Overview
The record gives the reactivity of an RNA of 207 nucleotides to 2A3. Values are in units of 0.01, from 0 to 300, in steps of 10. The RNA was probed in 150 mM KOAc, 10 mM MgCl2 and 150 mM bicine (pH 8.5) at 24 C. Reactivities are given for positions 27 through 156. The 2A3 profile rests on 1,413 reads.
[RMDB]
RNA sequence: GGGAACGACUCGAGUAGAGUCGAAAACGAUCAGUACGUUCGCGUACUGAUCGAAGCUACUGGAGACAGUAGCAAGUCUAAGACCUUGUUAGGCGGAAACAAGGAAAAAUGGAGGAUGGCCGGCCCUCCAUACUUAGACAACCGCCAACCGGCCAAAACGUGGAUAUCCAUUCGUGGAUAUCCACGUAAAAGAAACAACAACAACAAC
Reactivity to 2A3 in 0.01 (KOAc 150mM, MgCl2 10mM, bicine 150mM(pH8.5), 24C), signal-to-noise 1, nucleotides 027 to 156: c020g000a010u000c010a020g020u000a010c010g020u020u120c290g000c000g130u010a000c010u000g010a000u000c000g010a000a000g000c000u000a000c000u000g020g020a040g020a050c000a000g010u000a000g000c000a010a040g000u000c000u000a000a030g000a180c020c000u010u000g020u040u070a140g090g160c110g040g060a060a030a000c000a010a010g010g010a030a130a030a020a020u010g000g000a000g010g030a030u080g000g000c000c010g010g000c020c000c000u010c000c000a000u010a020c000u000u000a010g000a000c010a050a090c050c050g050c090c010a050a050c020c000g010g000c000c020a040a040a000